[RMDB]
RNA sequence: GGGAACGACUCGAGUAGAGUCGAAAACAUCGACGUUCCUGUUUGACAAUGAAACUGGUGCGUUCGCACCUCAAGAACAGGCUACGUCGUAAACCAUAAUAUCCCAACGCGGUCGGGAAUCCUCGCCCCUUCAGUACCUUUUCGAAGGUACUGAAGGAAAAGAAACAACAACAACAAC
Reactivity to 2A3 in 0.01 (KOAc 150mM, MgCl2 10mM, bicine 150mM(pH8.5), 24C), signal-to-noise 9, nucleotides 027 to 126: c040a090u100c010g000a000c000g000u010u000c010c000u000g020u000u000u030g080a060c110a100a110u180g100a150a100a110c130u100g010g000u010g010c030g140u250u290c120g000c000a000c000c000u020c030a060a050g010a010a000c000a000g040g000c110u050a000c000g000u000c000g000u010a030a010a020c020c000a020u070a170a040u090a140u040c010c000c000a010a030c090g050c060g020g030u130c020g030g010g070a050a110u060c010c000u020c010g020c010c000
Reactivity to DMS in 0.01 (KOAc 150mM, MgCl2 10mM, bicine 150mM(pH8.5), 24C), signal-to-noise 4, nucleotides 027 to 126: c190a120u010c000g000a010c000g010u010u010c000c020u000g000u000u000u000g010a120c290a110a140u020g020a060a110a100c220u010g000g000u000g000c010g000u030u030c240g000c000a020c000c010u030c100a090a160g010a010a020c000a010g000g020c120u000a010c010g000u000c000g000u000a050a070a100c120c140a070u020a070a100u030a130u000c010c000c000a100a100c200g010c080g000g000u000c040g010g010g010a060a050u000c040c010u000c040g000c100c060